Conditions: 150 mM KOAc, 10 mM MgCl2 and 150 mM bicine (pH 8.5), 24 C.
This 177-nucleotide RNA was probed chemically with DMS and 2A3.
For DMS the reverse transcriptase was MarathonRT.
[RMDB]
RNA sequence: GGGAACGACUCGAGUAGAGUCGAAAAACGGGCAGUGGCGAUGGCAACGCGGCAGCCGCAGGGUCGACUUCUUCGCAGCCGCAACAGACGGGCCACGGGCAAAGAGGGGGUCUCGUUCUGUUGGAAGCGAUACGGCCUAUUUCGAUAGGCCGUAUCGAAAAGAAACAACAACAACAAC
Reactivity to DMS in 0.01 (KOAc 150mM, MgCl2 10mM, bicine 150mM(pH8.5), 24C), signal-to-noise 1, nucleotides 027 to 126: a160c070g010g000g010c020a040g020u000g000g030c020g010a070u020g000g000c030a080a050c040g030c030g010g040c130a120g000c030c050g040c030a070g000g030g000u000c050g000a060c040u000u000c060u020u000c040g000c050a080g000c040c040g050c000a000a040c000a030g000a020c030g010g000g050c000c000a060c070g000g020g000c070a090a120a090g000a150g000g020g000g000g030u000c010u060c010g000u010u000c000u000g010u000u000g050g000a040a010g020
Reactivity to 2A3 in 0.01 (KOAc 150mM, MgCl2 10mM, bicine 150mM(pH8.5), 24C), signal-to-noise 4, nucleotides 027 to 126: a000c040g010g020g000c040a050g010u040g070g020c030g050a090u070g040g000c030a070a030c050g030c010g060g030c040a030g040c010c020g020c030a020g040g010g030u070c010g030a060c030u070u030c000u030u020c070g000c050a020g040c000c040g010c020a020a000c020a010g030a010c020g000g000g000c010c020a060c050g030g050g000c110a140a110a020g090a070g050g030g010g010g010u030c040u050c090g040u130u040c030u020g010u000u000g030g020a050a000g070